[RMDB]
RNA sequence: GGGAACGACUCGAGUAGAGUCGAAAAGCUACUGACGCAUUCACUAGAUUUGUAACUACUGGCAAGGCGAGCUUCAAGGAAUUCACCGCGUCUAUCCUGUCUGACCUUGCAAAAAUCUAUGCUAGGCAAGCACUUGUUGGUUUGAUCGGAAGCAUUGUCACUUAUAUCACUUCGGUGAUAUAAGUGAAAAAGAAACAACAACAACAAC
Reactivity to DMS in 0.01 (KOAc 150mM, MgCl2 10mM, bicine 150mM(pH8.5), 24C), signal-to-noise 5, nucleotides 027 to 156: g010c020u000a060c020u010g010a120c120g020c030a080u000u000c070a110c070u000a080g010a140u000u010u010g000u000a080a110c070u000a100c070u010g020g000c020a030a080g010g010c020g010a080g030c080u010u000c070a070a070g010g010a060a110u000u000c040a110c060c050g000c050g020u000c030u020a150u000c020c010u000g010u000c030u000g010a070c040c020u000u010g010c020a010a060a030a060a070u000c050u000a060u010g030c020u000a270g010g020c040a060a070g010c030a060c040u000u000g010u000u000g000g000u000u000u000g010a070u000c010g010g000a040a070g010c060a130u000u000g010
Reactivity to 2A3 in 0.01 (KOAc 150mM, MgCl2 10mM, bicine 150mM(pH8.5), 24C), signal-to-noise 4, nucleotides 027 to 156: g050c040u060a030c030u120g030a030c090g020c020a050u100u100c050a040c080u070a040g010a140u070u090u130g090u070a110a040c010u110a040c050u130g080g020c040a010a050g030g000c030g060a040g030c040u150u080c090a080a020g050g000a050a060u100u050c030a050c110c070g030c010g020u000c010u010a100u030c020c000u040g050u050c060u030g140a220c000c000u010u000g000c000a030a010a040a060a000u040c070u070a050u040g000c010u030a010g000g030c020a040a010g010c000a010c030u000u040g000u000u010g000g000u010u010u010g010a030u010c020g010g000a050a000g030c030a040u010u090g030

This 207-nucleotide RNA was probed chemically with DMS and 2A3. For 2A3 the reverse transcriptase was SuperScript II with manganese. Conditions: 150 mM KOAc, 10 mM MgCl2 and 150 mM bicine (pH 8.5), 24 C. It was measured as part of the RMDB library OK3TST.